[RMDB]
RNA sequence: GGGAACGACUCGAGUAGAGUCGAAAAGAUGCAGCUGCCGGUUCAUGGAUACCUCUGCAGUGCAUGUCGUAGGCUUGCACUUGCAUGGGUUUGCAUGACCCGGGAGAUGAACCCACCAUUGUCUUCCAGGACUGUUUGACUUCGGUCAAACAGUCCUAAAAGAAACAACAACAACAAC
Reactivity to 2A3 in 0.01 (KOAc 150mM, MgCl2 10mM, bicine 150mM(pH8.5), 24C), signal-to-noise 1, nucleotides 027 to 126: g090a010u210g030c100a030g020c010u100g100c000c000g000g000u010u000c000a000u000g180g110a050u060a060c000c000u060c020u000g000c000a000g000u000g030c000a000u070g050u000c160g200u190a090g030g030c000u010u000g030c000a010c000u010u230g000c000a000u000g000g000g000u000u000u000g120c000a000u020g000a000c000c000c030g000g000g000a000g000a000u060g000a050a030c020c000c000a010c040c020a130u090u070g030u030c000u030u010c000c030

An RNA of 177 nucleotides, treated with 2A3 and read out base by base. Source: RMDB library RFM100, as collected in RNAgym. Values are in units of 0.01, from 0 to 300, in steps of 10. For 2A3, 491 sequencing reads were counted. Conditions: 150 mM KOAc, 10 mM MgCl2 and 150 mM bicine (pH 8.5), 24 C.